An RNA of 177 nucleotides, treated with DMS and 2A3 and read out base by base.
RNA sequence: GGGAACGACUCGAGUAGAGUCGAAAAAGAUAUGGAGCCUAGGGAGCUGGAGUAUGUUGCAUCGAUCAGAAAUCGGAAACGAUUUCUGGGAGCAAUGAAACAGCGAAGAACUAGGCUCCUAAGUCAACGAUACAUAGUUGUUCGCAACUAUGUAUCGAAAAGAAACAACAACAACAAC
Reactivity to DMS in 0.01 (KOAc 150mM, MgCl2 10mM, bicine 150mM(pH8.5), 24C), signal-to-noise 6, nucleotides 027 to 126: a100g000a040u000a300u010g000g000a010g020c000c000u000a010g000g020g010a100g010c000u000g000g010a130g010u000a060u010g000u000u000g000c020a300u000c150g010a150u020c010a010g000a000a010a010u000c000g020g000a120a110a260c000g010a020u000u000u000c000u000g010g020g000a040g040c000a010a000u000g000a230a180a160c000a010g000c010g010a090a150g010a100a180c010u010a020g010g000c000u000c000c010u000a000a080g010u000c020a110a230
Reactivity to 2A3 in 0.01 (KOAc 150mM, MgCl2 10mM, bicine 150mM(pH8.5), 24C), signal-to-noise 4, nucleotides 027 to 126: a020g040a020u060a040u110g010g000a000g000c000c000u000a010g010g000g030a040g030c000u020g020g020a010g020u020a060u300g020u030u000g010c080a300u290c120g090a100u120c030a000g000a000a000a000u010c000g020g000a090a040a030c010g000a010u010u000u000c000u000g010g000g000a030g000c000a010a000u040g000a010a010a020c000a010g010c040g070a180a020g000a010a000c010u010a000g000g000c000u000c010c000u000a010a000g010u000c010a050a050
About this RNA:
Reactivities are given for positions 27 through 126. For 2A3, 11,766 sequencing reads were counted. The reactions ran in a buffer of 150 mM KOAc, 10 mM MgCl2 and 150 mM bicine (pH 8.5), at 24 C. High 2A3 reactivity points to a flexible backbone, as in loops and unpaired stretches. For 2A3 the reverse transcriptase was SuperScript II with manganese.